[RMDB]
Description:
This 177-nucleotide RNA was probed chemically with 2A3 and DMS. The DMS profile rests on 102,890 reads. Values cover nucleotides 27 to 126. 2A3 adducts were read by reverse transcription with SuperScript II with manganese.
RNA sequence: GGGAACGACUCGAGUAGAGUCGAAAAGGCGAAUAUUGCACAAUGGAAGGAAGCCUGAUGCAACGACGCCGCAUGAGGGAUGAAGGCCUUCGAGUGGUAAUCCUCUCUCAGCAGGGACGAGGCGCCAAUUAUAAUUGAUAUUCGUAUCAAUUAUAAUAAAAGAAACAACAACAACAAC
Reactivity to 2A3 in 0.01 (KOAc 150mM, MgCl2 10mM, bicine 150mM(pH8.5), 24C), signal-to-noise 9, nucleotides 027 to 126: g020g000c020g030a090a040u140a080u140u060g020c010a010c020a040a160u190g040g040a050a110g110g050a070a020g060c000c000u050g030a090u040g000c000a010a000c030g110a020c020g010c010c000g000c020a060u060g020a010g010g020g010a010u090g060a070a040g130g030c010c000u060u090c050g040a070g070u130g010g010u030a050a060u010c000c000u000c000u000c000u000c010a080g010c080a120g030g010g040a030c050g010a030g020g000c020g000c000c000a010
Reactivity to DMS in 0.01 (KOAc 150mM, MgCl2 10mM, bicine 150mM(pH8.5), 24C), signal-to-noise 9, nucleotides 027 to 126: g010g010c010g000a070a110u030a180u000u000g000c010a030c080a110a090u040g000g000a070a080g010g020a130a140g010c010c000u000g000a100u010g000c010a040a050c070g000a300c070g010c040c030g000c080a080u010g000a040g000g000g010a060u010g010a110a120g010g000c010c000u000u010c130g010a120g020u020g000g000u000a060a100u010c010c020u000c000u000c000u000c020a120g010c150a130g000g000g000a050c100g010a070g000g010c180g000c020c020a100

The RNA was probed in 150 mM KOAc, 10 mM MgCl2 and 150 mM bicine (pH 8.5) at 24 C.